Notes
An RNA of 177 nucleotides, treated with DMS and 2A3 and read out base by base. 2A3 adducts were read by reverse transcription with SuperScript II with manganese. DMS adducts were read by reverse transcription with MarathonRT.
RNA sequence: GGGAACGACUCGAGUAGAGUCGAAAAAUAGCGACAUGAAAAGGACACGAACAGACACCGAAAGGAAAGCAGGUAGGGCAUGCAGACGCUUGUAGAAAGUUCGUUCAAAACUUGAAAUAGUUUUGAACGUUAUUGUGGAUUUCGAUCCACAAUAACGAAAAGAAACAACAACAACAAC
Reactivity to DMS in 0.01 (KOAc 150mM, MgCl2 10mM, bicine 150mM(pH8.5), 24C), signal-to-noise 9, nucleotides 027 to 126: a080u020a080g010c040g010a050c050a050u000g000a050a040a080a100g000g010a070c070a070c060g000a080a070c100a080g010a110c060a130c020c020g000a080a080a110g000g010a050a070a080g010c060a040g000g010u010a060g010g000g010c040a040u010g010c050a050g000a080c090g010c050u000u000g000u010a090g010a060a070a100g010u010u010c050g010u000u000c000a000a000a000a000c000u000u000g000a060a060a060u010a010g000u000u000u000u000g000a010a040
Reactivity to 2A3 in 0.01 (KOAc 150mM, MgCl2 10mM, bicine 150mM(pH8.5), 24C), signal-to-noise 9, nucleotides 027 to 126: a000u110a020g030c020g040a040c030a060u130g070a040a040a020a040g050g010a020c030a010c080g050a110a020c020a050g090a020c020a030c030c030g060a090a030a020g080g030a080a060a010g030c040a010g010g050u070a040g030g030g000c030a020u070g010c000a010g030a050c040g010c050u040u050g020u030a020g070a020a060a020g040u060u070c030g000u010u000c000a000a000a000a010c000u020u040g040a040a050a040u190a060g000u000u000u000u010g010a010a000